[RMDB]
The data come from the RNA Mapping Database (RMDB), library OK1LIB.
An RNA of 177 nucleotides, treated with 2A3 and DMS and read out base by base.
Conditions: 150 mM KOAc, 10 mM MgCl2 and 150 mM bicine (pH 8.5), 24 C.
RNA sequence: GGGAACGACUCGAGUAGAGUCGAAAAAGGAUUAGAUACGGAAGAGUUAUAUAUAAACGGGCUUUCAUCCUGUUUGCCAGAGGAUAUACAGGAUGAAAUGAUCCGCACUAUCCCUGGUAUGGAACGCGUGCAAAAUGACUUUCGAGUCAUUUUGCACAAAAGAAACAACAACAACAAC
Reactivity to 2A3 in 0.01 (KOAc 150mM, MgCl2 10mM, bicine 150mM(pH8.5), 24C), signal-to-noise 3, nucleotides 027 to 126: a000g110g000a010u080u120a040g020a140u070a100c050g060g020a070a000g030a030g040u300u020a160u010a040u000a000u070a180a130a040c020g020g000g000c010u010u020u000c000a000u020c010c000u010g030u010u080u070g080c020c040a070g100a080g150g010a010u020a000u000a110c000a000g010g000a000u020g000a000a030a000u020g010a050u000c000c000g020c000a000c010u020a080u040c000c000c020u030g000g060u060a080u090g080g050a130a060c040g030c030
Reactivity to DMS in 0.01 (KOAc 150mM, MgCl2 10mM, bicine 150mM(pH8.5), 24C), signal-to-noise 2, nucleotides 027 to 126: a090g000g000a100u020u020a010g000a060u000a060c020g000g000a010a050g000a030g030u000u000a040u020a080u000a050u000a020a090a250c020g010g020g000c010u000u000u000c010a050u020c000c000u020g000u000u000u010g010c030c060a170g030a100g000g030a060u000a040u010a010c030a020g000g030a010u000g000a000a000a000u020g010a080u010c010c000g000c080a080c080u020a130u010c020c030c040u000g000g030u020a060u010g000g000a030a070c140g000c230

For 2A3 the reverse transcriptase was SuperScript II with manganese. Values are in units of 0.01, from 0 to 300, in steps of 10.